[RMDB]
RNA sequence: GGGAACGACUCGAGUAGAGUCGAAAAGAUAUGGACUUGUGACAUGUCGACACCUCGGAAACGAGGUGACGACAACAGCACAAGGUCCUAAGUCAAAGCUACACAUGACUUCGGUCAUGUGUAGCAACUCUAAGACAACCUUCGGGUUGUCUUAGAGAAAAGAAACAACAACAACAAC
Reactivity to 2A3 in 0.01 (KOAc 150mM, MgCl2 10mM, bicine 150mM(pH8.5), 24C), signal-to-noise 3, nucleotides 027 to 126: g020a030u050a040u070g010g010a000c010u020u000g010u000g050a180c050a170u180g010u020c000g000a010c000a000c000c000u000c010g010g010a070a040a030c010g000a010g010g000u000g000a000c000g000a000c010a050a020c050a010g020c000a000c010a010a000g100g070u150c000c000u020a050a010g030u000c040a140a070a040g010c000u010a010c000a000c020a000u010g000a010c000u060u100c300g010g010u000c000a000u000g000u000g000u000a000g000c000a000a000
Reactivity to DMS in 0.01 (KOAc 150mM, MgCl2 10mM, bicine 150mM(pH8.5), 24C), signal-to-noise 3, nucleotides 027 to 126: g000a030u000a280u000g000g000a170c000u010u000g010u010g000a090c070a150u000g010u010c010g010a100c000a000c000c000u000c000g000g010a050a060a120c010g010a010g020g020u000g000a010c010g000a010c030a030a030c200a130g000c000a020c000a010a020g010g000u000c000c000u010a010a090g010u000c020a070a160a150g000c000u010a000c000a010c010a010u000g000a010c000u000u020c230g020g000u000c020a000u000g010u000g010u000a000g020c010a000a010